An RNA of 177 nucleotides, treated with DMS and read out base by base.

[RMDB]
RNA sequence: GGGAACGACUCGAGUAGAGUCGAAAAGAUAUGGAAAGAUCUCGACAGAAAGAGGACGAUAAGCUCCACUCGGAAACGAGUGAAGAGCUUUUGACGUCUGAUUUCUGUCGAGAUCUUUCCUAAGUCACCUACUAAGCUACUUCGGUAGCUUAGUAGGAAAAGAAACAACAACAACAAC
Reactivity to DMS in 0.01 (KOAc 150mM, MgCl2 10mM, bicine 150mM(pH8.5), 24C), signal-to-noise 2, nucleotides 027 to 126: g010a020u010a300u010g000g020a010a020a020g000a000u000c000u000c000g000a010c030a020g020a000a030a020g010a300g000g000a000c000g000a150u000a010a020g020c000u000c000c000a020c000u000c000g000g010a200a100a150c000g010a020g000u000g000a120a140g010a010g000c000u000u000u000u010g020a260c030g010u000c000u000g000a300u000u000u000c000u000g010u000c010g010a000g000a000u000c000u000u010u000c000c010u000a020a080g010u010c020a210
DMS adducts were read by reverse transcription with MarathonRT. Conditions: 150 mM KOAc, 10 mM MgCl2 and 150 mM bicine (pH 8.5), 24 C.